[RMDB]
RNA sequence: GGGAACGACUCGAGUAGAGUCGAAAAAUAAAUGAUGAGUUAACGCUCAUCAAAGUAACGAAAGAUGGCGAUUCGGUACACAUGGAAACAUGCGCCAAACGGAAAAAUACACAGAAUCCGAAAAAAAACUAUCCAUAGAGUUCGCUCUAUGGAUAGUAAAAGAAACAACAACAACAAC
Reactivity to DMS in 0.01 (KOAc 150mM, MgCl2 10mM, bicine 150mM(pH8.5), 24C), signal-to-noise 2, nucleotides 027 to 126: a040u000a040a110a160u010g010a020u000g010a010g020u000u010a070a200c300g030c010u020c000a000u000c000a000a050a060g040u000a000a100c070g000a050a040a130g000a060u000g020g000c050g000a250u000u000c030g000g010u010a050c080a300c000a030u000g010g000a170a020a100c040a000u020g000c030g000c000c010a000a090a130c060g030g000a000a070a120a020a120u010a020c110a030c090a090g000a130a090u000c010c010g020a000a000a000a100a050a120a170
Reactivity to 2A3 in 0.01 (KOAc 150mM, MgCl2 10mM, bicine 150mM(pH8.5), 24C), signal-to-noise 1, nucleotides 027 to 126: a010u060a000a050a040u050g000a010u000g000a000g000u040u110a060a010c020g000c010u000c000a000u000c000a000a000a000g070u030a040a020c050g010a150a080a060g110a080u090g010g020c020g050a070u000u070c030g040g030u070a040c050a010c000a050u030g010g050a040a000a060c010a000u050g010c000g030c010c000a010a040a000c020g030g070a140a110a030a030a030u150a040c060a000c000a090g090a080a050u010c010c000g070a070a010a010a010a000a000a010